Source information: Chemical mapping of a 177-nucleotide RNA with 2A3 and DMS.

RNA sequence: GGGAACGACUCGAGUAGAGUCGAAAAGAUAUGGAGCGGGAAGGCUUUUGACGGUGAGGAAUCGGAAACGAUUCUCACCGAUAAGCCUCGCUCCUAAGUCAAAGUGUUCGUCUUCGGACGAACACAAGGUAUCAGAUUUGUUCGCAAAUCUGAUACCAAAAGAAACAACAACAACAAC
Reactivity to 2A3 in 0.01 (KOAc 150mM, MgCl2 10mM, bicine 150mM(pH8.5), 24C), signal-to-noise 5, nucleotides 027 to 126: g010a000u030a020u050g000g000a030g010c050g040g110g170a270a210g080g000c060u080u080u230u300g300a250c060g000g000u000g000a050g050g180a090a140u030c010g010g000a000a020a010c000g000a000u000u000c000u030c000a000c000c000g010a010u020a000a000g000c010c000u010c000g000c000u000c010c000u000a010a000g010u000c060a140a060a110g010u010g000u000u010c010g020u010c000u010u080c300g150g010a010c000g010a000a000c000a000c000a000a040
Reactivity to DMS in 0.01 (KOAc 150mM, MgCl2 10mM, bicine 150mM(pH8.5), 24C), signal-to-noise 3, nucleotides 027 to 126: g010a040u000a120u010g000g000a010g020c000g000g020g020a150a040g000g020c000u010u000u010u010g040a250c070g030g010u000g000a020g010g000a020a030u000c010g020g010a040a020a080c010g010a030u000u000c000u000c000a000c000c010g010a000u010a010a030g000c000c000u010c010g010c000u000c000c000u000a000a070g000u000c010a120a150a150g010u000g010u000u000c000g010u000c000u010u010c250g010g010a010c000g010a000a000c000a000c010a030a020
The data come from the RNA Mapping Database (RMDB), library TTRDES. The RNA was probed in 150 mM KOAc, 10 mM MgCl2 and 150 mM bicine (pH 8.5) at 24 C. For 2A3, 11,282 sequencing reads were counted. Reactivities are given for positions 27 through 126.